[RMDB]
RNA sequence: GGGAACGACUCGAGUAGAGUCGAAAAUCGUGCUGGUGAUGAUUAAAGAGCUAGCAAUGGUGAAUUCGAUGAAUUUGUUCGCGUGCCGCUGGGUGCGCAGCAGUGGUGAUAUGCAUUCUUACGCAGUCCCUCUCAUGAUUUUCGAAUCAUGAGAGGGAAAAGAAACAACAACAACAAC
Reactivity to DMS in 0.01 (KOAc 150mM, MgCl2 10mM, bicine 150mM(pH8.5), 24C), signal-to-noise 2, nucleotides 027 to 126: u010c020g030u000g000c010u000g020g000u000g000a210u000g010a110u010u030a060a140a020g010a300g000c030u000a020g000c000a050a070u020g010g020u000g010a050a120u010u010c040g000a120u030g000a110a090u020u020u000g020u010u000c050g070c060g010u000g000c010c020g000c230u000g000g020g010u010g010c000g000c020a030g000c000a020g000u020g000g020u020g010a060u000a090u000g000c090a100u000u000c080u020u020a080c110g000c120a090g000u000
Reactivity to 2A3 in 0.01 (KOAc 150mM, MgCl2 10mM, bicine 150mM(pH8.5), 24C), signal-to-noise 5, nucleotides 027 to 126: u060c020g010u010g010c020u000g000g030u040g030a080u020g020a020u070u190a290a120a050g090a030g030c020u040a000g000c020a030a130u150g030g030u060g040a070a080u090u050c070g040a070u080g110a080a180u100u050u030g040u020u060c070g000c000g030u040g020c010c020g040c170u170g160g000g000u020g010c000g000c000a000g020c000a000g000u050g080g010u060g040a050u060a040u220g010c020a040u060u000c020u050u020a070c100g000c080a040g050u050
The record gives the reactivity of an RNA of 177 nucleotides to DMS and 2A3. It was measured as part of the RMDB libraries RFM100 and RFMREP. DMS adducts were read by reverse transcription with MarathonRT.